[RMDB]
RNA sequence: GGGAACGACUCGAGUAGAGUCGAAAAGGUUUCUCCUGACGGCCAGAUUCAGUGAGGACACAGCUGAAGGCGAGGAAGCGAACACUUACGAGAGUCACCUAUUGGUAUGUUUCCUCAAACGCUAUUACUAAGUUUACGUAUUCGUACGUAAACUUAGAAAAGAAACAACAACAACAAC
Reactivity to DMS in 0.01 (KOAc 150mM, MgCl2 10mM, bicine 150mM(pH8.5), 24C), signal-to-noise 9, nucleotides 027 to 126: g010g000u010u000u010c020u000c010c030u000g000a270c090g020g000c030c040a110g000a240u000u010c040a060g010u010g010a100g010g010a070c100a070c130a180g010c030u010g000a040a140g000g010c110g010a040g010g010a070a050g010c030g000a080a110c110a060c060u000u000a060c070g010a250g000a070g020u000c050a100c030c010u000a130u000u000g010g010u000a060u010g010u000u000u000c020c020u010c100a050a090a090c180g010c070u000a080u000u000a180
Reactivity to 2A3 in 0.01 (KOAc 150mM, MgCl2 10mM, bicine 150mM(pH8.5), 24C), signal-to-noise 9, nucleotides 027 to 126: g050g010u020u030u010c030u020c020c010u080g120a040c050g150g020c040c020a050g020a130u070u070c010a020g090u020g170a080g010g050a030c050a010c020a090g000c010u040g020a050a010g030g020c070g010a020g020g020a040a010g040c050g060a060a010c020a010c080u060u050a020c040g020a010g010a010g100u030c010a020c020c000u070a220u090u190g050g010u090a140u220g040u020u010u020c010c000u040c030a040a060a040c100g010c060u080a070u250u070a120

Chemical mapping of a 177-nucleotide RNA with DMS and 2A3. Reactivities are given for positions 27 through 126. The DMS profile rests on 17,797 reads. 2A3 adducts were read by reverse transcription with SuperScript II with manganese. The data come from the RNA Mapping Database (RMDB), library OK2TST. Conditions: 150 mM KOAc, 10 mM MgCl2 and 150 mM bicine (pH 8.5), 24 C.